[RMDB]
RNA sequence: GGGAACGACUCGAGUAGAGUCGAAAAGAUAUGGAUCCAAAUCAUCGACAACAGCCUGACAUUCGGAAACGAAUGCAGGACAUGUCGGUUGGAUCCUAAGUCAAAACAGGUUCCUUCGGGAACCUGAUCAAGACCGUAUGUUCGCAUACGGUCUUGAAAAAGAAACAACAACAACAAC
Reactivity to 2A3 in 0.01 (KOAc 150mM, MgCl2 10mM, bicine 150mM(pH8.5), 24C), signal-to-noise 1, nucleotides 027 to 126: g010a000u040a010u050g010g010a010u000c010c030a100a100a100u260c170a050u150c060g000a020c020a300a020c070a250g000c000c020u100g090a290c000a010u000u000c000g000g000a000a000a000c010g000a020a000u000g000c000a000g000g030a000c030a070u140g000u000c010g000g020u000u030g000g000a000u000c000c000u000a030a000g000u010c000a020a010a080a130c010a010g000g000u000u010c010c000u110u140c290g060g010g010a010a000c000c000u010g000a040
Reactivity to DMS in 0.01 (KOAc 150mM, MgCl2 10mM, bicine 150mM(pH8.5), 24C), signal-to-noise 2, nucleotides 027 to 126: g000a000u000a020u010g000g000a010u000c010c000a000a060a220u030c220a160u000c020g000a000c000a180a060c140a170g010c000c010u020g000a150c000a010u000u010c000g080g010a000a000a020c000g000a000a010u000g020c000a010g030g010a010c030a190u000g040u000c000g000g020u000u000g000g000a030u000c000c000u010a010a030g000u000c010a150a090a090a230c000a030g000g010u000u000c000c000u000u000c180g050g030g010a000a010c000c000u010g000a030

The data come from the RNA Mapping Database (RMDB), library TTRDES. Structure probing data (2A3 and DMS) for a 177-nucleotide construct. High DMS reactivity at an A or C suggests that its Watson-Crick edge is free. The reactions ran in a buffer of 150 mM KOAc, 10 mM MgCl2 and 150 mM bicine (pH 8.5), at 24 C.